[RMDB]
RNA sequence: GGGAACGACUCGAGUAGAGUCGAAAACACCCGCAAUUCGUUGCGGGUGAGAGCACCACUCCUGCGGGAGUUAAGGCCAUACGGUCAGCCGGGUGCAAAGCCAUAGCAGGUCCUUCGGGACCUGCAACCUAACAUUCGGAUUCGUCCGAAUGUUAGGAAAAGAAACAACAACAACAAC
Reactivity to 2A3 in 0.01 (KOAc 150mM, MgCl2 10mM, bicine 150mM(pH8.5), 24C), signal-to-noise 6, nucleotides 027 to 126: c000a000c010c010c000g000c000a010a050u070u070c180g090u090u010g000c010g000g000g000u000g000a000g010a010g000c000a010c000c000a010c000u020c010c000u060g020c270g100g000g000a010g000u020u140a100a040g010g000c020c000a070u090a190c110g050g030u050c050a010g050c040c010g050g000g000u010g000c000a040a040a000g010c020c010a060u160a050g000c000a000g010g010u010c000c000u090u220c260g050g010g000a000c000c000u000g000c000a000a000
Reactivity to DMS in 0.01 (KOAc 150mM, MgCl2 10mM, bicine 150mM(pH8.5), 24C), signal-to-noise 4, nucleotides 027 to 126: c010a010c000c000c010g020c000a000a020u000u010c130g020u000u000g010c000g030g000g000u010g000a030g000a090g010c020a020c010c000a090c000u000c000c000u010g020c210g030g010g000a020g000u000u010a080a080g010g010c010c030a140u010a070c150g010g010u000c060a150g000c020c010g000g020g020u000g000c010a050a070a110g000c020c010a080u010a100g010c000a020g010g010u000c000c000u000u010c200g020g010g000a010c000c000u000g000c000a010a020